[RMDB]
RNA sequence: GGGAACGACUCGAGUAGAGUCGAAAAGUUGCCGGAAGGAACGUUGUGAGGGCAGGAUACUUGGGCAUGGCAUUGUCUGUGUCGAUCUGGCUGUCCUUGUGGAAGCGGCUGUGGCUAAGGGCCAUUCGACGGAGGUCGGGUAGUCCUUCAGCCUUGACACUACAUAAAUGUUCGCAUUUAUGUAGUGAAAAGAAACAACAACAACAAC
Reactivity to 2A3 in 0.01 (KOAc 150mM, MgCl2 10mM, bicine 150mM(pH8.5), 24C), signal-to-noise 5, nucleotides 027 to 156: g120u090u080g050c020c010g050g050a060a060g060g040a090a040c060g020u040u060g030u070g040a020g020g010g000c020a010g040g040a100u080a160c060u100u110g060g000g000c010a010u020g030g000c070a200u110u300g060u110c030u010g020u010g000u020c050g040a090u040c050u080g100g000c000u000g020u040c010c020u010u050g050u070g030g040a070a010g050c000g040g000c060u070g040u060g070g000c000u000a000a010g000g000g000c000c000a000u010u010c010g000a010c020g070g170a170g150g090u000c000g000g000g000u000a010g000u000c000c000u010u040c070a000g000c000c000u000u020g000a010
Reactivity to DMS in 0.01 (KOAc 150mM, MgCl2 10mM, bicine 150mM(pH8.5), 24C), signal-to-noise 2, nucleotides 027 to 156: g020u010u010g030c010c040g030g000a100a100g010g020a070a070c060g010u000u000g030u010g000a030g020g010g000c010a040g000g010a170u010a040c030u000u000g000g000g010c020a030u000g020g020c030a300u000u000g020u000c030u000g000u000g010u000c000g010a030u000c030u000g020g000c000u010g020u000c020c030u000u000g020u000g010g020a080a100g020c030g030g000c030u000g020u000g020g020c010u010a030a030g010g010g020c000c010a060u000u000c000g010a030c030g040g020a240g020g010u000c010g010g010g000u000a020g010u000c000c010u000u000c110a050g010c030c000u000u010g010a300

This 207-nucleotide RNA was probed chemically with 2A3 and DMS. The 2A3 profile rests on 5,827 reads. For DMS, 11,355 sequencing reads were counted. The RNA was probed in 150 mM KOAc, 10 mM MgCl2 and 150 mM bicine (pH 8.5) at 24 C.